RNA sequence: GGGAACGACUCGAGUAGAGUCGAAAACUCACGCGCGGUUUUAGCCUUUUCGCCGUCCAUGUGGUCUAAGGUUGGUUUCAGCGUCUUGGCUUUCAGAACAACAUCAACCAUGUUAGCAACCGCCGCCGCAUCCAUCUUCACAGUAUCAACCGCGUCGGUCAGCGAGAUAUUUCGAUAUCUCGCUGACAAAAGAAACAACAACAACAAC
Reactivity to 2A3 in 0.01 (KOAc 150mM, MgCl2 10mM, bicine 150mM(pH8.5), 24C), signal-to-noise 2, nucleotides 027 to 156: c040u020c010a040c020g050c000g000c000g010g070u030u040u040u180a060g060c050c000u040u180u060u150c140g010c050c010g040u030c040c010a040u070g050u070g000g030u020c070u140a110a080g080g000u110u260g120g050u040u160u130c060a060g000c010g100u000c060u010u070g040g010c000u030u260u150c040a050g070a130a020c050a080a040c010a140u080c020a000a070c100c000a050u090g050u070u080a020g000c020a000a000c000c030g000c010c010g020c000c010g030c000a000u090c040c010a080u000c060u140u150c040a030c000a110g070u140a040u220c010a020a000c000c000g030c000g050u080c010g010
This 207-nucleotide RNA was probed chemically with 2A3. 2A3 adducts were read by reverse transcription with SuperScript II with manganese. Reactivities are given for positions 27 through 156. Source: RMDB library OK3TST, as collected in RNAgym.